[RMDB]
Source: RMDB library OK1LIB, as collected in RNAgym. Chemical mapping of a 177-nucleotide RNA with DMS and 2A3. Conditions: 150 mM KOAc, 10 mM MgCl2 and 150 mM bicine (pH 8.5), 24 C. For 2A3, 20,465 sequencing reads were counted.

RNA sequence: GGGAACGACUCGAGUAGAGUCGAAAAGCUAGCUAGUAAGUGCUAGCAGCAAUCAGGUUUAAGGCAACGGCUAUGCAAGCUACUGAUAGGCCAAGCAAUAGGUCCAAUGUGAUGCACAUUGCCGAGCAUUUACAUACAAAUUCGUUUGUAUGUAAAUAAAAGAAACAACAACAACAAC
Reactivity to DMS in 0.01 (KOAc 150mM, MgCl2 10mM, bicine 150mM(pH8.5), 24C), signal-to-noise 9, nucleotides 027 to 126: g000c000u000a060g020c000u000a030g010u020a120a140g020u030g010c000u000a010g000c000a040g000c050a120a100u040c110a100g000g000u010u010u010a090a080g010g010c020a080a110c040g000g000c000u000a060u000g000c060a070a130g000c040u020a040c020u000g000a190u030a180g000g000c000c010a100a100g010c250a100a110u030a090g000g010u010c000c020a040a120u010g000u000g000a110u020g010c020a100c050a040u010u000g000c000c010g000a160g000c050
Reactivity to 2A3 in 0.01 (KOAc 150mM, MgCl2 10mM, bicine 150mM(pH8.5), 24C), signal-to-noise 6, nucleotides 027 to 126: g010c000u040a010g010c000u000a000g020u060a290a030g070u060g090c000u010a000g000c000a000g000c010a000a060u080c020a030g090g000u020u040u060a060a010g060g000c010a060a070c020g000g000c000u000a000u010g000c010a040a050g000c000u010a010c010u020g010a030u090a050g000g000c010c000a040a000g030c010a030a090u050a080g000g000u010c000c010a010a020u030g030u000g050a300u060g010c000a000c000a010u000u030g000c000c000g000a010g000c000